[RMDB]
RNA sequence: GGGAACGACUCGAGUAGAGUCGAAAACUAGGUGUCUGACUAGUGAUCCUAGUGUGAUCCAUGACCAUGCUCAUGGCUAGGCGAGAUACAUGGUACACUAGCAUGCUCGUACGUCUACUAGGUACUGACCACAAGUGCGGUUCGCCGCACUUGUGGUAAAAGAAACAACAACAACAAC
Reactivity to 2A3 in 0.01 (KOAc 150mM, MgCl2 10mM, bicine 150mM(pH8.5), 24C), signal-to-noise 2, nucleotides 027 to 126: c010u010a000g020g030u090g060u040c060u120g060a060c000u000a000g030u030g110a060u050c000c000u000a020g030u000g050u000g060a020u040c000c010a020u020g050a070c090c040a150u210g010c000u000c020a020u070g060g000c050u100a090g020g040c000g030a070g020a030u130a090c010a010u020g000g090u140a030c100a020c080u040a040g030c010a000u060g000c020u030c010g030u100a190c030g020u040c010u050a050c010u000a010g050g000u040a110c010u080g070
Reactivity to DMS in 0.01 (KOAc 150mM, MgCl2 10mM, bicine 150mM(pH8.5), 24C), signal-to-noise 2, nucleotides 027 to 126: c010u000a020g030g020u000g020u010c050u010g000a070c050u000a010g010u000g010a110u000c050c000u010a020g010u060g010u050g020a130u010c030c040a020u000g000a070c020c180a130u000g000c090u030c060a020u000g000g000c180u000a080g000g000c060g000a050g000a110u010a220c050a050u000g010g010u000a040c180a090c140u000a020g010c110a070u000g010c090u000c080g010u020a090c170g000u000c020u000a040c060u010a020g020g000u000a130c130u000g010